[RMDB]
RNA sequence: GGGAACGACUCGAGUAGAGUCGAAAACUACUUACUCUGCAUUGGCAUUUAUCCUUUUACAGGUAAUUUCUUCGUACGUAACUAACUGUCGCGAAGAGCAAGGUGCGUUUUGUGUUAGCACGUACAACACGCAGUCAUCGUUCGCGAUGACUGCGUGAAAAGAAACAACAACAACAAC
Reactivity to 2A3 in 0.01 (KOAc 150mM, MgCl2 10mM, bicine 150mM(pH8.5), 24C), signal-to-noise 1, nucleotides 027 to 126: c000u020a030c000u000u000a050c040u020c000u170g000c000a000u030u030g070g000c030a080u020u120u190a210u210c010c000u100u050u030u150a060c070a010g000g070u060a020a030u010u050u110c030u090u100c050g010u000a010c000g000u010a130a000c020u020a020a020c000u080g050u100c020g010c020g080a050a060g040a060g100c060a050a090g210g030u110g000c000g030u020u020u190u130g100u000g030u000u040a010g050c040a010c000g000u000a010c000a020a000
Reactivity to DMS in 0.01 (KOAc 150mM, MgCl2 10mM, bicine 150mM(pH8.5), 24C), signal-to-noise 2, nucleotides 027 to 126: c060u000a070c200u010u000a020c040u000c010u000g010c180a040u000u000g000g030c270a090u000u020u000a090u020c010c010u000u000u000u000a080c130a050g000g010u000a070a080u000u000u000c020u010u000c070g000u010a010c050g040u000a170a130c080u010a020a060c060u000g010u000c060g010c030g010a020a040g010a060g060c180a140a080g010g020u030g020c060g010u000u000u020u000g000u020g030u000u000a130g030c180a020c110g020u000a040c050a100a180